[RMDB]
RNA sequence: GGGAACGACUCGAGUAGAGUCGAAAACGCAAGGAUGGAAGAGGCAGAAGCAGGAAUAGGCAUUCAGGCGUGGGAGCCCCAGCCGUCCUUCUGUCCACCAUGGCGAGCAGGGCCAGCGUCCUGUCCAAACCCUUGGUGCUGCAGAUGAGGAGACCGACGUAUCGAAAAUGUUCGCAUUUUCGAUACGAAAAGAAACAACAACAACAAC
Reactivity to 2A3 in 0.01 (KOAc 150mM, MgCl2 10mM, bicine 150mM(pH8.5), 24C), signal-to-noise 2, nucleotides 027 to 156: c020g020c040a020a040g040g000a020u080g020g060a080a080g000a120g070g000c000a010g030a070a010g000c080a030g050g040a070a050u100a030g010g000c050a030u110u100c070a070g020g000c040g050u090g040g080g030a080g030c000c000c000c030a010g060c020c040g100u030c000c000u040u070c040u020g040u000c000c020a030c020c000a020u020g010g010c020g030a030g010c010a010g000g000g000c000c060a110g040c120g120u050c010c000u040g050u040c030c020a060a080a110c010c020c020u010u020g010g000u040g060c060u070g000c020a010g030a120u100g050a060g040g020a030g060a020c040c050g060a020
Reactivity to DMS in 0.01 (KOAc 150mM, MgCl2 10mM, bicine 150mM(pH8.5), 24C), signal-to-noise 2, nucleotides 027 to 156: c050g030c030a090a080g070g010a130u000g030g050a110a110g020a080g020g070c020a150g000a080a040g060c000a070g000g040a020a070u000a110g030g000c000a100u000u000c080a040g010g000c030g000u000g000g000g000a180g020c040c020c000c020a120g010c030c020g000u010c030c060u050u000c020u000g020u010c300c070a080c020c000a080u010g030g040c040g010a100g030c000a000g010g000g000c000c030a210g010c250g000u000c000c020u010g030u020c030c030a070a070a060c140c010c040u030u000g010g030u010g010c000u000g000c030a030g000a100u000g020a060g000g020a220g000a120c050c010g000a150

An RNA of 207 nucleotides, treated with 2A3 and DMS and read out base by base. The data come from the RNA Mapping Database (RMDB), library OK3TST. DMS adducts were read by reverse transcription with MarathonRT.